RNA sequence: GGGAACGACUCGAGUAGAGUCGAAAAAAUGUGUAAUGUGAGUCCCCGCAACUUCAGAAGCGUGGACGUCAACAUUUGAAGACACCACGCAUCUGGGCAGCCCCGUGGAGAAGCCCCCAAGGUAAGCUCACUACCCGGAAUUCGUUCCGGGUAGUGAAAAAGAAACAACAACAACAAC
Reactivity to 2A3 in 0.01 (KOAc 150mM, MgCl2 10mM, bicine 150mM(pH8.5), 24C), signal-to-noise 2, nucleotides 027 to 126: a000a000u280g020u040g030u060a060a060u050g040u040g060a000g030u100c000c000c000c000g000c010a100a120c000u240u200c070a080g020a070a000g000c000g000u060g040g040a130c150g060u020c020a020a090c020a130u090u130u300g190a070a010g040a000c000a000c000c000a000c000g040c030a000u000c000u010g020g000g000c000a010g030c000c000c000c000g060u030g010g090a120g000a070a050g030c010c000c000c000c000a010a000g060g040u100a000a020g010c000
Reactivity to DMS in 0.01 (KOAc 150mM, MgCl2 10mM, bicine 150mM(pH8.5), 24C), signal-to-noise 2, nucleotides 027 to 126: a050a000u030g020u010g010u000a070a030u060g000u010g000a130g040u000c000c000c000c020g010c150a050a080c060u000u060c020a010g020a020a020g000c000g010u010g010g000a090c070g000u000c010a010a280c130a200u000u040u000g030a060a230g000a000c000a090c000c000a030c050g010c010a090u000c000u070g030g010g000c070a170g040c050c010c000c050g030u020g000g000a050g000a090a090g000c040c030c000c000c020a070a110g000g030u020a010a120g030c120
Notes:
The data come from the RNA Mapping Database (RMDB), library OK1LIB. Structure probing data (2A3 and DMS) for a 177-nucleotide construct. The RNA was probed in 150 mM KOAc, 10 mM MgCl2 and 150 mM bicine (pH 8.5) at 24 C. For DMS the reverse transcriptase was MarathonRT. 2A3 adducts were read by reverse transcription with SuperScript II with manganese.